RNA sequence: GGGAACGACUCGAGUAGAGUCGAAAAGAAAAGAAAACGCAGCCAAGCGCGUGCGGAAGGCUGCGAAGAACGUAAAGGUGGACGCAGCACGCGCAAACAAAACAAAAGUGGACACCACGGAAAGAAAGCGGAUAUAUUUGUUCGCAAAUAUAUCCGCAAAAGAAACAACAACAACAAC
Reactivity to DMS in 0.01 (KOAc 150mM, MgCl2 10mM, bicine 150mM(pH8.5), 24C), signal-to-noise 1, nucleotides 027 to 126: g000a040a170a120a130g020a090a100a160a060c020g020c150a080g000c000c000a160a010g000c000g000c000g000u000g000c000g010g000a150a100g090g050c020u000g090c020g050a000a020g000a200a100c120g000u000a110a050a050g000g010u020g060g000a070c000g000c000a030g010c050a000c070g030c010g140c000a040a110a010c100a140a150a030a030c150a000a000a010a060g010u060g000g000a060c020a010c010c010a120c060g000g050a020a000a020g000a080a130a050